Structure probing data (DMS) for a 177-nucleotide construct.
The DMS profile rests on 1,232 reads.
Values cover nucleotides 27 to 126.
The reactions ran in a buffer of 150 mM KOAc, 10 mM MgCl2 and 150 mM bicine (pH 8.5), at 24 C.
Source: RMDB library M2PK90, as collected in RNAgym.
Reactivities are rounded to 0.1 and cut off at 0 and 3.
RNA sequence: GGGAACGACUCGAGUAGAGUCGAAAAUAAAAUUGAUGUGUAGGAUAGGUGGGAGGCUUUGAAGUGUGGACGCCAGUCUGCAUGGAGCCGACCUUGAAUUACCACCCUUUAAUGAAAAGAAAAAAAAUCCAAGCAAUAGAUUCGUCUAUUGCUUGGAAAAAGAAACAACAACAACAAC
Reactivity to DMS in 0.01 (KOAc 150mM, MgCl2 10mM, bicine 150mM(pH8.5), 24C), signal-to-noise 2, nucleotides 027 to 126: u020a050a080a050a230u010u010g020a080u000g030u000g030u010a020g000g010a140u000a030g000g030u010g000g010g010a270g010g000c000u000u010u000g000a100a160g010u020g010u010g010g010a010c010g020c230c240a070g000u000c010u010g000c000a010u000g010g000a020g000c000c000g000a060c010c020u000u000g000a100a060u020u000a040c020c020a060c010c010c100u000u000u000a100a070u010g000a030a040a050a160g030a020a020a040a030a050a070a040a120